[RMDB]
Structure probing data (DMS and 2A3) for a 207-nucleotide construct. 2A3 is a SHAPE reagent: it acylates the 2'-hydroxyl of flexible nucleotides of all four kinds.
RNA sequence: GGGAACGACUCGAGUAGAGUCGAAAAACGAUCGUACACUCGAGAACGUGUUCGUACGAUCGAGUGUUCGUUCUCGUGUGAACUCUCUCUCUCGAGAGAGAGUGAGAUCUCGAUCGAGAGAGUGAACGUGAGUUCUCGAUCACACUCACUCGUUCGAUACGGGCAUUAGAUUCGUCUAAUGCCCGUAAAAAGAAACAACAACAACAAC
Reactivity to DMS in 0.01 (KOAc 150mM, MgCl2 10mM, bicine 150mM(pH8.5), 24C), signal-to-noise 1, nucleotides 027 to 156: a120c050g010a090u000c020g000u010a110c010a050c040u000c010g020a030g000a090a170c080g040u040g020u000u000c150g040u000a070c070g000a140u030c020g010a020g030u000g010u000u000c010g000u000u000c040u000c040g000u030g010u000g020a090a040c030u000c030u000c000u000c000u000c010u000c110g020a120g000a300g010a010g000a010g020u000g010a180g010a110u000c010u010c010g000a240u050c010g000a070g000a080g000a000g010u000g000a050a040c100g030u000g010a110g010u000u000c140u010c090g020a120u000c040a210c070a030c040u000c010a070c030u000c020g000u000u000c040g000a280
Reactivity to 2A3 in 0.01 (KOAc 150mM, MgCl2 10mM, bicine 150mM(pH8.5), 24C), signal-to-noise 3, nucleotides 027 to 156: a000c020g010a030u050c000g040u060a030c020a010c040u010c000g020a050g030a170a060c060g040u060g070u110u110c110g050u110a130c070g030a150u120c020g000a010g000u040g020u070u040c010g000u040u020c010u010c030g060u020g010u040g030a030a010c010u030c000u000c000u000c000u020c000u000c080g030a020g000a000g000a010g000a000g010u080g010a060g020a090u020c020u000c000g020a040u020c000g010a020g000a020g000a010g010u020g020a080a000c030g040u090g050a030g010u040u020c020u010c010g030a070u040c010a030c000a000c100u000c010a020c010u010c010g010u020u050c010g010a040